[RMDB]
RNA sequence: GGGAACGACUCGAGUAGAGUCGAAAAUAUUAUGUUGCUUAUUAUAUUUGUCAGGUGAUUACAUAACAUAUAUAGACGUAAUUAUCGGCUAUUUACACCGAGGUACAGAAAAGUUAUGUGAGUAUAAGUGUCUGUAAACUUUCGAGUUUACAGACACAAAAGAAACAACAACAACAAC
Reactivity to 2A3 in 0.01 (KOAc 150mM, MgCl2 10mM, bicine 150mM(pH8.5), 24C), signal-to-noise 2, nucleotides 027 to 126: u230a160u280u000a090u250g040u050u040g030c020u020u020a030u060u180a140u220a120u070u180u110g200u090c140a170g000g090u060g060a060u010u000a020c000a000u000a040a000c000a020u080a000u030a030u020a210g110a060c030g000u010a080a000u100u080a130u160c020g000g010c000u000a120u250u300u000a050c070a000c000c000g100a000g010g010u020a050c000a000g130a100a000a110a020g000u000u000a000u000g000u000g010a000g120u020a110u050a300a030
Reactivity to DMS in 0.01 (KOAc 150mM, MgCl2 10mM, bicine 150mM(pH8.5), 24C), signal-to-noise 2, nucleotides 027 to 126: u010a110u010u020a120u020g010u020u010g000c090u020u020a070u000u000a140u000a100u010u000u000g000u000c100a080g000g060u010g020a220u000u020a010c000a010u000a000a060c000a080u000a020u000a200u010a030g020a080c110g000u030a000a000u020u030a120u000c000g000g060c290u000a040u010u040u070a220c300a110c070c010g000a020g000g020u000a020c030a080g000a060a140a110a110g040u010u000a000u000g020u000g020a010g000u010a060u030a020a110